Conditions: 150 mM KOAc, 10 mM MgCl2 and 150 mM bicine (pH 8.5), 24 C. Structure probing data (DMS and 2A3) for a 177-nucleotide construct. 2A3 adducts were read by reverse transcription with SuperScript II with manganese. For DMS the reverse transcriptase was MarathonRT.
[RMDB]
RNA sequence: GGGAACGACUCGAGUAGAGUCGAAAAUAUAGGCUCGUACAAGCUGGGGCAGAACUUCCGGGUAGCACCCAAGAUGGUCUUGAUAAUUUGGGUUUCCGCUAGCUGCCCAUUAUCAAGAGUCUAUACAAGCGGGUCAGUUAUUCGUGGUUGGUCUGCUAAAAGAAACAACAACAACAAC
Reactivity to DMS in 0.01 (KOAc 150mM, MgCl2 10mM, bicine 150mM(pH8.5), 24C), signal-to-noise 9, nucleotides 027 to 126: u020a050u010a060g010g010c010u000c020g010u030a130c230a090a100g010c140u000g010g010g000g000c000a020g010a060a090c030u000u000c270c010g000g000g010u010a060g020c110a090c000c000c010a040a040g010a090u010g010g010u020c070u020u010g000a070u010a040a050u010u020u010g010g000g000u000u020u020c060c040g010c160u010a030g010c050u010g000c000c000c000a000u010u010a020u010c090a040a070g000a040g010u010c000u010a040u010a050c190a100
Reactivity to 2A3 in 0.01 (KOAc 150mM, MgCl2 10mM, bicine 150mM(pH8.5), 24C), signal-to-noise 9, nucleotides 027 to 126: u150a010u020a020g010g000c000u010c030g060u080a030c040a060a030g020c040u010g010g010g010g000c000a000g000a040a030c000u020u000c010c000g000g000g020u020a020g020c030a050c010c000c000a010a010g080a050u140g060g150u070c040u110u110g040a070u050a130a070u040u030u070g000g000g000u020u040u030c020c010g010c050u030a010g000c000u010g000c000c000c000a000u020u030a030u020c010a000a020g000a000g020u000c000u000a030u010a030c040a030